[RMDB]
Overview:
The record gives the reactivity of an RNA of 177 nucleotides to 2A3 and DMS. For 2A3, 1,424 sequencing reads were counted. High 2A3 reactivity points to a flexible backbone, as in loops and unpaired stretches. The reactions ran in a buffer of 150 mM KOAc, 10 mM MgCl2 and 150 mM bicine (pH 8.5), at 24 C. Reactivities are given for positions 27 through 126. High DMS reactivity at an A or C suggests that its Watson-Crick edge is free.
RNA sequence: GGGAACGACUCGAGUAGAGUCGAAAAGUCGCGUUGGGUCAUCAUCGGCAGCGAAGUCUCCGCGUGCAACGUCGCCGCCCCGCCAUCCGGGUCACCGGCGACCUCGGCGACCCGGGCCCACAACCGGCACGAAAAUCGAGUUCGCUCGAUUUUCGUGAAAAGAAACAACAACAACAAC
Reactivity to 2A3 in 0.01 (KOAc 150mM, MgCl2 10mM, bicine 150mM(pH8.5), 24C), signal-to-noise 2, nucleotides 027 to 126: g060u080c010g010c040g080u120u120g060g030g020u140c060a110u040c040a040u070c110g050g000c040a000g000c030g060a040a020g070u010c030u010c030c040g020c050g020u050g020c060a130a020c030g030u050c020g000c000c000g010c000c000c000c050g050c050c020a080u050c020c000g000g000g000u010c010a010c050c020g050g000c080g030a010c010c000u020c000g000g000c010g000a000c000c000c010g000g000g000c010c000c000a040c000a010a070c010c040g040g000
Reactivity to DMS in 0.01 (KOAc 150mM, MgCl2 10mM, bicine 150mM(pH8.5), 24C), signal-to-noise 1, nucleotides 027 to 126: g050u010c030g020c000g010u020u050g000g010g010u030c030a100u020c150a020u010c120g010g030c010a100g010c060g000a090a240g000u030c040u000c020c030g030c060g000u000g000c080a050a100c080g000u010c020g000c000c000g030c020c000c050c000g050c030c050a150u030c000c000g010g000g000u000c020a060c030c000g010g000c170g010a040c130c120u000c000g010g000c070g000a100c000c000c000g000g000g000c000c050c000a060c160a090a120c120c020g000g030